Notes: Chemical mapping of a 177-nucleotide RNA with DMS and 2A3. For 2A3, 1,514 sequencing reads were counted. Conditions: 150 mM KOAc, 10 mM MgCl2 and 150 mM bicine (pH 8.5), 24 C. DMS adducts were read by reverse transcription with MarathonRT.

RNA sequence: GGGAACGACUCGAGUAGAGUCGAAAAAGAGAGCGCGAAAAAGAUCGAUCGAUCGUUUGUACGCGCAAGUUUAAGUUUGAUACGGGCAUACUAGCUAGCUAGCUAGCAAAACAAACUUAAUAAAGAAGAUACCACUUUCUUUCGAGAAAGUGGUAUCAAAAGAAACAACAACAACAAC
Reactivity to DMS in 0.01 (KOAc 150mM, MgCl2 10mM, bicine 150mM(pH8.5), 24C), signal-to-noise 3, nucleotides 027 to 126: a080g000a160g000a090g030c000g000c000g010a080a050a020a060a030g000a010u000c000g010a250u020c180g000a000u000c000g000u000u000u000g020u000a090c030g010c020g010c010a040a050g010u010u000u000a000a000g010u000u000u000g000a130u000a100c180g000g020g000c130a100u000a100c000u000a010g000c010u000a170g030c140u000a060g040c000u020a000g010c050a020a050a090a060c010a010a000a000c000u000u000a000a020u000a050a050a110g000a120a090
Reactivity to 2A3 in 0.01 (KOAc 150mM, MgCl2 10mM, bicine 150mM(pH8.5), 24C), signal-to-noise 2, nucleotides 027 to 126: a000g220a000g000a020g010c050g000c000g090a000a040a000a020a000g010a000u010c030g060a150u160c180g000a040u000c000g120u000u060u120g040u060a030c000g000c010g000c000a000a000g000u000u020u000a000a000g000u030u000u010g130a110u100a120c020g080g060g000c060a030u090a170c040u020a020g030c000u010a020g140c040u050a000g010c000u010a000g020c050a030a090a000a060c000a000a010a010c000u000u000a010a000u100a090a160a030g130a060a010